[RMDB]
RNA sequence: GGGAACGACUCGAGUAGAGUCGAAAAACGAGUCGUACGCGACUCGAAUGGUAUUGUUGGCGUAAAAGAACAAGACGUCACCGGACGCGACCGGGCUAAAAAGCGAAACGUCAUCUACGGAUGACGAAAAACGGACCUGGGUUCGCCCAGGUCCGAAGGAAGAAUUGUGGUUCGCCACAAUUCUUCCAAAAGAAACAACAACAACAAC
Reactivity to 2A3 in 0.01 (KOAc 150mM, MgCl2 10mM, bicine 150mM(pH8.5), 24C), signal-to-noise 1, nucleotides 027 to 156: a000c010g000a000g010u040c020g000u090a050c260g030c020g170a000c000u000c000g000a030a050u070g090g030u160a150u070u220g080u100u050g000g000c010g000u030a000a020a160a200g100a110a050c080a180a090g040a040c000g010u020c010a000c010c000g000g000a010c010g000c000g010a000c000c000g010g010g000c060u030a010a010a010a010a010g010c000g000a080a030a000c000g000u000c000a000u010c000u020a100c200g130g000a000u010g000a010c010g030a030a030a020a000a000c010g000g000a000c000c000u000g010g000g000u000u070c130g040c080c000c010a000g020g000u000c000c000g000a000a000
An RNA of 207 nucleotides, treated with 2A3 and read out base by base. 2A3 adducts were read by reverse transcription with SuperScript II with manganese. The RNA was probed in 150 mM KOAc, 10 mM MgCl2 and 150 mM bicine (pH 8.5) at 24 C. Source: RMDB library M2RFPK, as collected in RNAgym.